[RMDB]
Overview
Structure probing data (2A3 and DMS) for a 177-nucleotide construct. Conditions: 150 mM KOAc, 10 mM MgCl2 and 150 mM bicine (pH 8.5), 24 C. For 2A3, 6,299 sequencing reads were counted. For DMS the reverse transcriptase was MarathonRT.
RNA sequence: GGGAACGACUCGAGUAGAGUCGAAAACAGCGGCUACAACAUGAACCCUGUCUUCAUAUACUUGGUGCCGAAGCCCUGCCCCCGCGGGCGUAUCGUGCUCCCGGGUUUGUGCGCUCGGCCGGUACGCCAGGAUACGAUAGUUCGCUAUCGUAUCCUGAAAAGAAACAACAACAACAAC
Reactivity to 2A3 in 0.01 (KOAc 150mM, MgCl2 10mM, bicine 150mM(pH8.5), 24C), signal-to-noise 4, nucleotides 027 to 126: c030a010g050c040g010g040c040u130a050c040a120a010c020a120u110g040a040a030c040c030c080u070g080u060c060u070u040c040a040u130a020u040a210c050u040u090g070g000u090g060c020c020g020a020a020g030c010c000c010u010g020c030c000c000c010c000g010c040g010g000g000c000g010u020a030u060c040g030u090g040c050u150c010c030c030g010g020g000u030u110u180g180u070g040c060g010c010u000c000g000g000c000c020g000g010u010a000c020g000c010
Reactivity to DMS in 0.01 (KOAc 150mM, MgCl2 10mM, bicine 150mM(pH8.5), 24C), signal-to-noise 6, nucleotides 027 to 126: c090a070g020c080g020g000c020u000a100c080a080a070c190a080u010g000a070a070c050c050c060u000g010u000c100u000u000c070a050u000a130u000a070c110u000u000g000g010u000g010c030c030g000a090a150g000c010c010c010u000g020c030c030c010c010c030g020c260g010g010g010c000g010u000a010u000c040g010u000g010c160u010c180c040c030g020g000g000u000u010u010g030u000g020c160g000c020u000c030g000g020c040c000g010g000u000a010c030g010c030